[RMDB]
RNA sequence: GGGAACGACUCGAGUAGAGUCGAAAAUGCCAAUGAUGUACACUUGUGUUUGUUCCUGCGUUGCAGGAUCUCCUUGCAUAAUUACACGCGAAUGGUAACCUUAAUCUGGGGUAGGUUACAAUGGUAACCUAGAAAUCGGGUUCGCCCGAUUUCUAGGAAAAGAAACAACAACAACAAC
Reactivity to DMS in 0.01 (KOAc 150mM, MgCl2 10mM, bicine 150mM(pH8.5), 24C), signal-to-noise 2, nucleotides 027 to 126: u020g030c140c140a070a110u010g000a030u000g020u000a160c170a050c040u010u000g020u010g000u000u010u000g000u000u000c000c000u010g010c050g010u000u010g000c000a030g020g010a070u000c150u000c070c040u000u000g010c020a040u000a050a080u000u000a070c090a080c080g030c080g000a120a090u010g010g020u000a030a060c000c020u000u000a060a110u000c140u020g000g010g000g000u010a020g000g000u000u000a020c020a070a090u010g030g000u000a020a130
Reactivity to 2A3 in 0.01 (KOAc 150mM, MgCl2 10mM, bicine 150mM(pH8.5), 24C), signal-to-noise 2, nucleotides 027 to 126: u100g070c010c010a010a020u130g010a050u080g080u080a030c040a010c060u060u020g030u020g040u040u120u130g040u010u010c010c000u010g050c040g160u080u160g000c010a010g020g020a050u030c090u030c030c020u040u040g010c000a020u070a120a090u220u050a120c050a010c090g040c030g080a060a070u110g090g000u010a000a040c020c010u110u100a120a050u150c070u120g070g030g000g000u040a010g000g000u020u000a020c010a000a000u020g070g020u050a030a000